[RMDB]
RNA sequence: GGGAACGACUCGAGUAGAGUCGAAAAAGUCAGUGGUCCGACUUACGAGUCGGUCCACUGACAUGGCAGCUGGAUCCAGCCAGGCGGUGUAUCGCCAAACCCAGCCAAUCAAUCUACCCACCGGGAAUACAGAAAGCGAACUUCGGUUCGCUUUCAAGUAGGAGGUUAAGUUCGCUUAACCUCCUACAAAAGAAACAACAACAACAAC
Reactivity to 2A3 in 0.01 (KOAc 150mM, MgCl2 10mM, bicine 150mM(pH8.5), 24C), signal-to-noise 3, nucleotides 027 to 156: a000g000u010c000a010g000u000g010g000u000c000c020g000a010c020u050u060a060c260g090a000g010u000c000g010g000u000c000c000a000c000u010g010a000c000a000u000g010g000c000a010g000c010u020g010g000a060u070c170c020a010g010c010c010a020g010g010c030g020g040u190g080u160a150u300c020g000c010c000a010a000a020c000c000c000a000g000c010c010a010a090u150c030a040a070u000c030u240a100c010c010c040a100c120c140g010g000g060a080a000u190a130c040a060g000a010a030a000g000c000g000a000a000c010u030u010c080g100g000u000u000c000g010c000u000u000u000c000a000a000

An RNA of 207 nucleotides, treated with 2A3 and read out base by base. It was measured as part of the RMDB library M2RFPK. The reactions ran in a buffer of 150 mM KOAc, 10 mM MgCl2 and 150 mM bicine (pH 8.5), at 24 C.